[RMDB]
Source: RMDB library OK2TRN, as collected in RNAgym.
Structure probing data (DMS and 2A3) for a 177-nucleotide construct.
The 2A3 profile rests on 2,652 reads.
Reactivities are rounded to 0.1 and cut off at 0 and 3.
For DMS the reverse transcriptase was MarathonRT.
Values cover nucleotides 27 to 126.
Conditions: 150 mM KOAc, 10 mM MgCl2 and 150 mM bicine (pH 8.5), 24 C.
The DMS profile rests on 2,415 reads.
RNA sequence: GGGAACGACUCGAGUAGAGUCGAAAAGUACGACGAUCGUACGUACACAGAUCACGGCGCGAUCGAGCGCGACGAUCUCACGAUCGAUCGGCCUAUGUGGUACGAGACGGCCACAGUACGCUAGGCCAUUGCCGUCGCUAUUCGUAGCGACGGCAAUAAAAGAAACAACAACAACAAC
Reactivity to DMS in 0.01 (KOAc 150mM, MgCl2 10mM, bicine 150mM(pH8.5), 24C), signal-to-noise 3, nucleotides 027 to 126: g000u000a020c000g010a170c240g000a020u000c030g020u010a140c030g000u000a040c020a100c080a000g050a080u010c100a130c270g000g020c010g060c000g010a030u000c060g000a060g020c000g000c010g010a010c210g010a090u010c110u010c040a030c040g000a030u000c010g000a010u000c000g000g020c000c010u000a080u000g020u000g000g010u000a010c010g000a100g010a040c020g000g000c030c050a070c190a240g030u000a010c050g010c200u010a070g000g010c030c040
Reactivity to 2A3 in 0.01 (KOAc 150mM, MgCl2 10mM, bicine 150mM(pH8.5), 24C), signal-to-noise 3, nucleotides 027 to 126: g030u030a000c010g040a010c070g000a080u030c010g000u020a050c030g020u050a020c140a000c000a030g070a030u160c050a010c180g060g000c120g000c010g140a070u080c090g000a020g030c000g000c000g020a060c120g020a050u050c000u010c040a050c030g030a030u010c000g000a070u050c020g010g000c000c000u060a090u090g050u030g180g020u070a090c050g010a080g050a140c050g000g040c050c020a150c030a010g020u060a020c040g060c090u060a020g110g030c070c000